[RMDB]
RNA sequence: GGGAACGACUCGAGUAGAGUCGAAAAUGCCCCAGGCCCAGGAGGAGCAGCGGCCCCCCUGGCAGCGCACCGGUGGGACGGAUGUGGGGAUGGGCACAGAGCCGGGCAGCCCAGAGGGCAGCCCCUGCGUCUUUAGAAAGUUCGCUUUCUAAAGACGAAAAGAAACAACAACAACAAC
Reactivity to 2A3 in 0.01 (KOAc 150mM, MgCl2 10mM, bicine 150mM(pH8.5), 24C), signal-to-noise 4, nucleotides 027 to 126: u070g030c010c000c000c010a030g100g000c030c010c010a020g020g050a080g000g030a070g010c050a010g170c090g300g020c030c010c010c000c010c000u010g020g000c040a050g090c020g020c050a100c050c030g040g030u080g020g020g050a040c020g030g010a150u110g060u180g010g020g000g070a090u090g020g010g020c090a040c050a080g160a040g060c050c040g000g020g000c000a010g010c010c010c030a110g230a070g100g020g000c020a010g000c020c000c000c010u070g040
Reactivity to DMS in 0.01 (KOAc 150mM, MgCl2 10mM, bicine 150mM(pH8.5), 24C), signal-to-noise 5, nucleotides 027 to 126: u010g020c040c000c010c090a170g020g000c060c010c010a060g000g000a100g030g010a150g020c040a100g020c120g020g020c030c010c020c010c030c020u000g010g000c060a060g000c090g020c090a080c040c040g010g010u000g000g000g010a150c110g000g000a120u010g020u010g010g000g000g000a120u000g010g000g010c070a060c120a080g000a150g010c070c090g000g010g020c040a020g000c010c010c010a160g010a130g020g000g010c020a010g020c030c010c010c090u000g000
This 177-nucleotide RNA was probed chemically with 2A3 and DMS. For DMS, 6,902 sequencing reads were counted. DMS adducts were read by reverse transcription with MarathonRT. Source: RMDB library OK2TRN, as collected in RNAgym. Conditions: 150 mM KOAc, 10 mM MgCl2 and 150 mM bicine (pH 8.5), 24 C. 2A3 adducts were read by reverse transcription with SuperScript II with manganese. For 2A3, 5,709 sequencing reads were counted.